[RMDB]
RNA sequence: GGGAACGACUCGAGUAGAGUCGAAAAAUUUAAAGGCCAGGACGGUCACCUUUGGGGUGGUGACAAGUGUGAUCACUUGGGUGGUGGCUGUGUUUGCGCUUCUCCCAGGAAUCUCGUUUACCAGAUCGCAUUAUCGUAGCUUCGGCUACGAUAAUGCAAAAGAAACAACAACAACAAC
Reactivity to 2A3 in 0.01 (KOAc 150mM, MgCl2 10mM, bicine 150mM(pH8.5), 24C), signal-to-noise 2, nucleotides 027 to 126: a000u130u190u040a100a070a030g050g000c000c000a000g050g030a070c020g010g000u000c000a000c000c000u140u090u180g070g000g000g000u050g000g000u000g090a000c090a040a020g180u190g010u030g190a070u190c030a010c000u020u040g170g000g030u090g000g010u000g030g000c020u000g000u000g000u000u000u000g030c000g020c000u080u040c010u040c000c000c000a000g020g060a070a030u010c000u120c170g030u050u030u120a220c060c010a010g000a200u080c010

Structure probing data (2A3) for a 177-nucleotide construct. Reactivities are rounded to 0.1 and cut off at 0 and 3. The reactions ran in a buffer of 150 mM KOAc, 10 mM MgCl2 and 150 mM bicine (pH 8.5), at 24 C.